Structure probing data (DMS and 2A3) for a 177-nucleotide construct. The DMS profile rests on 3,630 reads. The RNA was probed in 150 mM KOAc, 10 mM MgCl2 and 150 mM bicine (pH 8.5) at 24 C. For 2A3 the reverse transcriptase was SuperScript II with manganese. Reactivities are rounded to 0.1 and cut off at 0 and 3. For DMS the reverse transcriptase was MarathonRT. For 2A3, 6,329 sequencing reads were counted.
RNA sequence: GGGAACGACUCGAGUAGAGUCGAAAAGAAAAUAAGCGCGUAAUCGCGUCUUGACGUGAGUGAGCCCACACGAACAGCUAUCCCAAGUGGGAUAGCAUAGCUCACAAUACGCUAAGAUUCGUGUGAAGAUGACCUAUCCAUUCGUGGAUAGGUCAUCAAAAGAAACAACAACAACAAC
Reactivity to DMS in 0.01 (KOAc 150mM, MgCl2 10mM, bicine 150mM(pH8.5), 24C), signal-to-noise 3, nucleotides 027 to 126: g000a040a060a070a090u020a090a050g020c070g000c000g000u010a070a300u010c000g040c020g000u030c020u000u000g000a070c020g000u000g000a130g000u000g000a020g060c000c150c020a040c020a010c040g000a020a020c040a100g000c040u000a000u000c000c000c000a300a200g050u040g030g020g010a000u000a020g000c020a070u000a030g000c000u000c050a040c060a110a120u060a030c040g000c050u020a020a100g040a240u010u000c000g040u000g000u000g000a270a080
Reactivity to 2A3 in 0.01 (KOAc 150mM, MgCl2 10mM, bicine 150mM(pH8.5), 24C), signal-to-noise 6, nucleotides 027 to 126: g070a010a110a030a050u300a040a020g010c030g000c030g050u070a070a090u130c020g010c000g030u030c020u040u100g100a040c010g020u010g020a010g010u020g010a020g030c000c050c000a000c000a000c010g000a000a000c010a020g000c000u000a000u020c000c000c020a230a120g210u300g120g000g000a000u000a000g000c000a010u020a010g000c000u030c020a030c000a030a130u100a070c060g010c030u050a080a000g020a150u000u000c000g000u000g010u000g030a020a040